[RMDB]
Overview: Structure probing data (2A3) for a 207-nucleotide construct. 2A3 is a SHAPE reagent: it acylates the 2'-hydroxyl of flexible nucleotides of all four kinds.
RNA sequence: GGGAACGACUCGAGUAGAGUCGAAAAAAUGGAAUCCAUUGAGGAUAACAUGCAGGGGCCACUAUGUCUGUAUGCUUCAAUGUGCCAGCAUGAUUACAGAUUUCAAAAGGAAAAAACACAUUUAAAAAAUAGACAUCGUUCCAUUCUGAGCAAGGGAGCCAUUAAAUCCUUUCGAGGAUUUAAUGGCAAAAGAAACAACAACAACAAC
Reactivity to 2A3 in 0.01 (KOAc 150mM, MgCl2 10mM, bicine 150mM(pH8.5), 24C), signal-to-noise 1, nucleotides 027 to 156: a000a000u150g040g010a090a050u050c010c000a010u040u220g070a120g060g000a010u010a100a040c010a000u070g000c010a000g000g000g110g000c040c020a030c020u140a070u070g060u070c000u000g000u030a050u160g040c000u010u080c010a000a050u040g040u080g120c030c000a000g040c020a030u040g020a010u040u050a040c070a000g110a040u070u140u130c120a180a040a000a040g050g050a070a150a010a000a120a000c010a010c010a010u100u140u290a040a070a010a000a000a000u040a000g040a000c010a010u010c010g010u020u030c020c000a000u040u080c050u120g040a050g040c050a020a020g190g000g000a090